RNA sequence: GGGAACGACUCGAGUAGAGUCGAAAACAGCUACGUUUCGACGUAGCUGAAAAUAAAACAGCCAAGUACCAGCCUGAAAAAGGUACAAAGAUCGAAAGAUCAAAACGGUUCGAUUCGUCGAACCGAAUCUAAUCUAUGCGUUCGCGCAUAGAUUAGAAAAAGAAACAACAACAACAAC
Reactivity to 2A3 in 0.01 (KOAc 150mM, MgCl2 10mM, bicine 150mM(pH8.5), 24C), signal-to-noise 3, nucleotides 027 to 126: c000a000g020c000u000a000c000g030u010u060u170c200g110a010c010g000u000a000g000c000u000g000a000a000a000a010u110a010a090a000a010c040a020g020c010c010a130a000g000u010a000c000c010a010g040c010c020u040g110a110a000a000a030a040g000g000u010a000c010a020a130a000g000a010u000c020g010a060a040a020g000a000u020c000a000a020a010a040c010g000g030u000u010c000g010a020u030u050c180g030u000c010g090a000a000c000c000g020a010a010
Reactivity to DMS in 0.01 (KOAc 150mM, MgCl2 10mM, bicine 150mM(pH8.5), 24C), signal-to-noise 3, nucleotides 027 to 126: c010a020g000c010u010a000c000g010u000u010u020c220g020a040c000g040u000a010g000c000u000g000a020a030a050a060u010a090a070a060a130c220a050g000c010c030a050a060g020u000a020c000c000a050g000c030c090u010g020a050a070a020a050a070g000g000u010a010c010a070a120a120g020a010u000c000g000a090a090a140g000a000u000c000a080a030a100a140c000g000g010u000u000c010g000a030u000u000c180g010u010c000g010a010a000c000c000g000a020a020